This 207-nucleotide RNA was probed chemically with 2A3.
[RMDB]
RNA sequence: GGGAACGACUCGAGUAGAGUCGAAAAGCGGAGCGCGCCCUGAGCACCCAAGUCCCAGCGCGCGAAUUCGUGGACGCCGUCUGGCAGCCGCGGCGGACGUCGCUGGCGCUGGUGAUCGUGGGCGCCAUGGGCGUCGGCGUCUUUCGCGCCGGCGACGGAACGCUUGAGUCUUCGGACUCAAGCGUUCAAAAGAAACAACAACAACAAC
Reactivity to 2A3 in 0.01 (KOAc 150mM, MgCl2 10mM, bicine 150mM(pH8.5), 24C), signal-to-noise 1, nucleotides 027 to 156: g020c030g040g060a050g010c050g000c010g020c000c010c010u050g020a070g000c020a080c040c020c080a130a090g080u100c020c010c010a000g000c010g000c030g000c020g020a020a130u120u080c000g040u050g050g060a050c010g000c030c000g150u100c120u270g020g000c060a010g050c000c010g000c000g000g030c060g020g020a140c030g010u050c020g000c010u020g000g000c010g040c010u070g020g090u090g000a050u070c040g090u120g020g020g000c020g000c030c000a110u080g080g000g050c010g010u000c010g000g000c000g000u020c070u110u210u210c090g000c000g000c000c000g000g010c000g020a000c000g040
About this RNA
It was measured as part of the RMDB library OK3TST.